[RMDB]
RNA sequence: GGGAACGACUCGAGUAGAGUCGAAAACAAAUAUUUGAGGACUGCUAACACAUUUCCUUCUUCUACUUACUCCACAAGGCUUCUUUUCUUCAAACCAAACAUGCCCAUCUAUUUCAAACAGGGAGGCCCUAUAACGAAGGUUCGCCUUCGUUAUAGGAAAAGAAACAACAACAACAAC
Reactivity to 2A3 in 0.01 (KOAc 150mM, MgCl2 10mM, bicine 150mM(pH8.5), 24C), signal-to-noise 9, nucleotides 027 to 126: c010a010a090a030u240a110u100u120u180g080a060g020g040a040c030u040g020c040u110a130a010c050a020c030a110u040u050u070c010c000u010u080c010u070u010c010u020a080c020u070u040a040c010u020c020c020a050c020a090a030g040g010c020u050u020c000u030u100u030u010c020u060u080c040a070a080a090c020c030a050a050a070c050a060u120g020c000c010c000a040u040c020u090a150u040u170u110c100a110a120a070c030a030g000g020g040a030g020g000c000
Reactivity to DMS in 0.01 (KOAc 150mM, MgCl2 10mM, bicine 150mM(pH8.5), 24C), signal-to-noise 4, nucleotides 027 to 126: c070a100a100a120u040a050u020u010u030g000a070g000g000a040c140u010g010c040u010a080a060c120a060c080a070u010u010u010c030c020u010u010c070u020u000c040u000a070c020u000u010a060c020u000c020c040a070c080a060a090g000g000c040u000u000c030u000u030u000u010c040u000u000c050a030a060a090c050c030a060a080a110c150a060u040g010c010c010c020a090u030c060u000a070u010u010u000c150a060a110a080c140a080g000g000g010a040g000g000c110